About this RNA:
The data come from the RNA Mapping Database (RMDB), library OK1LIB. Structure probing data (2A3 and DMS) for a 177-nucleotide construct.
[RMDB]
RNA sequence: GGGAACGACUCGAGUAGAGUCGAAAACACGUAUGACACUGCCGGUCUCACCAUGCCCACAGCAACACUGGGUAACCUCCGAGGCUAUGGCAUGGCAUCCCCAGGCCUCGCAGCCCCCAGCCUCACACUACAACGUGAUCUUCGGAUCACGUUGUAGAAAAGAAACAACAACAACAAC
Reactivity to 2A3 in 0.01 (KOAc 150mM, MgCl2 10mM, bicine 150mM(pH8.5), 24C), signal-to-noise 4, nucleotides 027 to 126: c070a000c030g090u150a050u170g050a040c030a020c060u020g000c000c000g070g000u020c010u020c020a050c020c010a020u090g020c000c010c000a060c020a030g050c020a060a120c040a030c110u060g000g040g020u060a070a070c010c010u050c030c020g010a010g040g000c010u060a140u100g020g000c030a020u020g020g000c020a100u100c000c010c000c010a000g020g000c000c000u010c040g010c010a030g000c000c000c000c000c000a010g010c000c000u050c010a080c000a010
Reactivity to DMS in 0.01 (KOAc 150mM, MgCl2 10mM, bicine 150mM(pH8.5), 24C), signal-to-noise 3, nucleotides 027 to 126: c000a110c120g000u020a030u020g030a080c060a070c040u010g000c020c040g000g000u050c040u010c080a100c010c040a060u030g010c000c010c300a080c130a090g000c170a150a060c190a160c110u010g020g020g000u000a110a090c170c060u000c160c010g000a070g000g000c020u020a040u080g000g000c040a020u030g010g000c090a180u010c060c030c010c010a090g010g000c020c000u000c090g000c140a080g000c060c010c000c020c020a020g000c040c010u000c000a080c220a120